[RMDB]
RNA sequence: GGGAACGACUCGAGUAGAGUCGAAAAACUAUGCAAAAUCGAAAGAUGAAGUAUAUGGUCUGACACCUGCCCGGUGCUGGAAGGUUAAAAGGAGUAGUUAUCUUCGGAGAAGCUAUGAAUUGAAGCCUGAAUGGUCUGGGUUCGCCCAGACCAUUCAAAAAGAAACAACAACAACAAC
Reactivity to DMS in 0.01 (KOAc 150mM, MgCl2 10mM, bicine 150mM(pH8.5), 24C), signal-to-noise 2, nucleotides 027 to 126: a080c090u000a010u030g000c030a030a200a220a010u000c000g010a080a080a190g000a000u000g000a120a280g000u000a030u000a030u000g000g010u010c050u000g000a090c020a070c030c050u050g030c020c090c110g010g000u000g000c090u060g000g030a030a010g000g030u000u000a170a170a040a010g010g000a300g000u000a000g000u000u000a200u000c020u000u050c200g030g000a010g000a120a160g010c030u000a000u000g000a160a150u000u000g000a200a030g020c060c000
Reactivity to 2A3 in 0.01 (KOAc 150mM, MgCl2 10mM, bicine 150mM(pH8.5), 24C), signal-to-noise 1, nucleotides 027 to 126: a000c040u040a020u020g000c000a000a190a080a080u030c020g080a150a010a000g000a000u060g050a100a000g000u000a010u050a060u030g030g020u080c060u070g070a020c020a020c020c000u080g030c010c000c010g000g000u070g000c050u040g050g080a050a040g000g000u040u080a040a020a010a010g030g000a060g000u000a000g020u300u080a000u000c010u000u000c140g040g000a000g000a000a000g000c000u000a000u000g000a020a060u040u010g030a120a000g000c020c010